[RMDB]
RNA sequence: GGGAACGACUCGAGUAGAGUCGAAAACAAACCGUGCAAAAUUGUCAAAUGCGGUCUACCGUCAGAAUUUCGGGCGGAAAUACGACAUUAUACAGAAAGCCGGCCGCAAUGUCGUAUAGCACGGAAACAUGACUGAUCGGUUCGCCGAUCAGUCAUGAAAAGAAACAACAACAACAAC
Reactivity to 2A3 in 0.01 (KOAc 150mM, MgCl2 10mM, bicine 150mM(pH8.5), 24C), signal-to-noise 3, nucleotides 027 to 126: c020a000a100a000c000c000g010u010g000c000a000a020a000a200u100u040g040u120c010a060a030a140u100g000c000g000g000u020c020u100a020c000c010g000u000c010a040g040a190a160u190u140u150c000g010g000g000c000g040g070a000a000a080u120a010c040g010a000c050a050u050u090a090u110a110c090a070g300a090a010a000g100c120c080g010g000c000c000g000c000a010a020u040g020u000c020g010u020a000u040a030g010c000a000c000g000g000a010a000a000
Reactivity to DMS in 0.01 (KOAc 150mM, MgCl2 10mM, bicine 150mM(pH8.5), 24C), signal-to-noise 2, nucleotides 027 to 126: c080a060a120a180c000c000g040u000g010c000a110a010a060a120u030u080g030u010c070a050a010a130u030g000c000g160g030u000c070u000a200c000c000g010u010c000a010g000a040a180u000u050u080c130g010g060g010c000g020g020a000a110a100u000a100c140g000a040c070a090u030u030a080u000a070c260a130g000a040a030a120g000c130c130g020g000c040c120g000c000a000a130u000g000u000c000g000u000a040u010a140g000c030a000c060g010g000a130a010a100
Source information
The record gives the reactivity of an RNA of 177 nucleotides to 2A3 and DMS.